[RMDB]
RNA sequence: GGGAACGACUCGAGUAGAGUCGAAAACAGUGUCGGGCCACAGGUUUUGUGCCAUUAGCGUGCAGUGCAGCCCGGACAAAAGACACGCCCCAGGAGGACUGGGAAAACUACUCCCUUCGGGGAGUAGGUUAGUCGUAAUCUUCGGAUUACGACUAACAAAAGAAACAACAACAACAAC
Reactivity to DMS in 0.01 (KOAc 150mM, MgCl2 10mM, bicine 150mM(pH8.5), 24C), signal-to-noise 2, nucleotides 027 to 126: c030a140g000u000g010u000c000g020g000g020c000c010a020c020a050g020g030u010u010u020u020g020u010g000c000c010a010u000u010a110g020c020g010u000g050c020a300g000u000g000c000a090g000c000c000c000g020g000a040c240a060a050a050a030g010a170c010a010c000g020c010c000c000c010a020g010g000a180g020g000a220c000u000g000g000g000a060a030a050a300c000u000a000c000u000c000c000c010u000u000c150g030g000g000g000a010g000u010a000g010
Reactivity to 2A3 in 0.01 (KOAc 150mM, MgCl2 10mM, bicine 150mM(pH8.5), 24C), signal-to-noise 1, nucleotides 027 to 126: c010a020g010u000g020u040c000g000g000g000c020c010a000c000a020g120g140u150u190u300u050g020u000g000c000c000a010u000u020a020g000c000g010u000g010c000a000g000u000g020c020a000g000c000c000c010g000g000a010c030a000a050a010a000g110a000c000a000c030g000c030c000c000c020a020g000g030a060g060g150a040c020u010g000g000g000a110a000a020a000c000u010a000c020u010c000c000c000u000u040c110g060g000g010g000a010g000u000a000g000
This 177-nucleotide RNA was probed chemically with DMS and 2A3. The RNA was probed in 150 mM KOAc, 10 mM MgCl2 and 150 mM bicine (pH 8.5) at 24 C. 2A3 adducts were read by reverse transcription with SuperScript II with manganese. As a SHAPE reagent, 2A3 marks flexible, mostly unpaired nucleotides at the ribose 2'-OH.